[RMDB]
RNA sequence: GGGAACGACUCGAGUAGAGUCGAAAAGCAUUUCAGAGAAGAUAACAUUUGAGUUAGCCAGCCCUGGUGGUCUAGGCGUUAAGAUUCAGUGCUGUCACCAUUGCAGCCCAGGCUUGUUUCCUGGUCAAACUUUCUCACUUUUCGAAGUGAGAAAGUUAAAAGAAACAACAACAACAAC
Reactivity to 2A3 in 0.01 (KOAc 150mM, MgCl2 10mM, bicine 150mM(pH8.5), 24C), signal-to-noise 2, nucleotides 027 to 126: g000c030a050u060u180u210c160a120g110a020g040a240a020g030a080u060a080a030c020a080u110u130u200g030a020g040u020u120a020g000c030c000a000g000c000c040c030u080g140g050u160g070g000u090c070u100a110g000g000c010g030u070u110a070a040g040a010u030u040c000a010g020u010g020c000u000g020u030c000a030c060c020a050u070u110g000c010a000g000c030c000c010a010g050g030c050u090u110g040u030u120u040c020c010u000g000g000u040c020a040
Reactivity to DMS in 0.01 (KOAc 150mM, MgCl2 10mM, bicine 150mM(pH8.5), 24C), signal-to-noise 3, nucleotides 027 to 126: g020c030a050u000u010u010c150a100g020a170g010a140a080g010a070u010a030a050c030a050u000u000u000g000a070g010u000u000a130g010c030c040a100g010c030c000c010u010g000g040u000g000g000u010c060u000a080g020g000c000g020u010u010a080a090g010a070u000u000c040a030g000u010g000c040u010g010u000c040a090c050c040a080u010u000g020c040a110g000c110c010c030a040g000g010c090u000u000g000u000u000u000c020c000u010g010g000u000c170a090